[RMDB]
RNA sequence: GGGAACGACUCGAGUAGAGUCGAAAACGUCACGCUAUCGACGGGCACGCCGUACUCGUCCUGCAGGAUGCCGCGGAUCCACACCGGCGCGGUCAUCUGGUACUCCGGUGUUCCGACGCGCUUGCCGCGAAGGGGGAUCCUUCGGGAUCCCCCUUCGAAAAGAAACAACAACAACAAC
Reactivity to 2A3 in 0.01 (KOAc 150mM, MgCl2 10mM, bicine 150mM(pH8.5), 24C), signal-to-noise 1, nucleotides 027 to 126: c020g020u060c020a060c070g050c040u090a030u270c070g100a040c030g010g010g020c080a020c030g030c010c020g040u060a080c030u010c000g020u010c000c000u060g000c050a050g060g070a120u030g040c050c010g000c030g060g030a120u040c090c020a040c020a040c070c060g040g000c020g000c050g010g060u150c010a080u080c030u080g030g030u090a020c020u000c010c030g000g020u020g030u060u010c000c030g010a060c020g070c000g000c030u010u050g060c040c050g020
Reactivity to DMS in 0.01 (KOAc 150mM, MgCl2 10mM, bicine 150mM(pH8.5), 24C), signal-to-noise 3, nucleotides 027 to 126: c080g000u000c040a100c080g010c070u010a080u010c090g020a060c060g000g000g030c070a060c050g030c030c030g010u010a060c030u000c040g020u010c030c040u010g020c110a130g000g000a050u000g010c020c040g010c060g000g000a120u000c060c120a070c050a050c070c060g000g010c300g010c060g020g010u010c040a070u010c050u000g000g000u000a060c080u010c040c040g000g020u000g010u000u010c010c000g030a100c040g000c120g010c020u010u010g020c050c030g000